[RMDB]
RNA sequence: GGGAACGACUCGAGUAGAGUCGAAAAGAUAUGGAGAUCCUAUCGCAGCUAUGAAGCAAAUCGGAAACGAUUUGUGGAGCUGAUGAGUAGGAGUCUCCUAAGUCAAAACGCAGUCUUCGGACUGCGACGCUGCAUUAAGGUUCGCCUUAAUGCAGCGAAAAGAAACAACAACAACAAC
Reactivity to 2A3 in 0.01 (KOAc 150mM, MgCl2 10mM, bicine 150mM(pH8.5), 24C), signal-to-noise 2, nucleotides 027 to 126: g010a000u050a020u120g020g040a030g020a010u020c010c000u010a020u030c000g000c010a010g000c000u080a080u300g020a000a020g030c010a010a010a000u010c000g000g030a030a080a090c020g010a040u010u050u030g000u010g100g000a010g000c030u030g080a300u130g040a070g050u030a030g000g070a020g160u000c020u000c000c010u020a100a050g040u000c060a000a040a080a100c030g000c000a020g000u050c020u070u130c290g140g030a000c000u020g000c000g000a000
Reactivity to DMS in 0.01 (KOAc 150mM, MgCl2 10mM, bicine 150mM(pH8.5), 24C), signal-to-noise 2, nucleotides 027 to 126: g000a020u000a300u030g030g000a000g010a300u000c000c000u000a000u020c020g000c020a020g000c000u000a300u000g000a160a210g010c000a000a000a000u030c000g000g000a100a140a130c000g010a000u010u000u020g020u000g090g000a000g020c010u000g070a020u040g000a120g000u010a020g000g010a040g010u010c030u000c000c010u000a000a090g000u020c030a080a140a160a180c030g000c000a000g000u010c010u000u000c200g010g010a000c010u000g000c000g000a040
The record gives the reactivity of an RNA of 177 nucleotides to 2A3 and DMS. For DMS the reverse transcriptase was MarathonRT. For DMS, 1,325 sequencing reads were counted. In probing experiments dimethyl sulfate is read out at A N1 and C N3, which are open when not base-paired. The 2A3 profile rests on 2,578 reads. The data come from the RNA Mapping Database (RMDB), library TTRDES.